[RMDB]
RNA sequence: GGGAACGACUCGAGUAGAGUCGAAAAACGUGGUGGUACGCCACCACGAAACCGAUGAAGAGCCUUUUGGGCCCUGAGAGAUGAUGAAAGCCCCCCUAUCUGAGGACACGCGUGUACGCACGCGUGAGCUCGUUUGGAAGUUCGCUUCCAAACGAGCAAAAGAAACAACAACAACAAC
Reactivity to 2A3 in 0.01 (KOAc 150mM, MgCl2 10mM, bicine 150mM(pH8.5), 24C), signal-to-noise 3, nucleotides 027 to 126: a000c000g000u010g010g000u000g000g030u070a050c230g040c000c000a000c020c000a000c000g000a010a000a010c000c040g020a030u090g040a020a070g050a010g090c010c010u090u160u110u220g030g010g000c000c000c020u120g010a060g010a030g010a070u140g010a040u120g060a070a060a060g040c000c060c000c010c020c010u060a070u070c060u060g050a080g060g090a030c000a000c010g010c060g000u000g000u060a060c230g000c130a000c000g030c000g000u000g010a000
Reactivity to DMS in 0.01 (KOAc 150mM, MgCl2 10mM, bicine 150mM(pH8.5), 24C), signal-to-noise 1, nucleotides 027 to 126: a100c000g000u010g000g090u000g000g020u000a230c120g000c020c000a020c000c000a000c010g000a000a020a060c000c000g000a080u010g010a040a060g020a090g000c000c010u000u010u000u000g020g000g000c000c040c000u010g010a170g000a060g000a150u010g010a110u010g010a060a070a140g000c070c100c000c020c030c020u040a160u010c040u000g000a090g010g020a190c010a000c000g020c000g090u000g030u010a120c300g020c000a000c000g010c020g040u010g000a070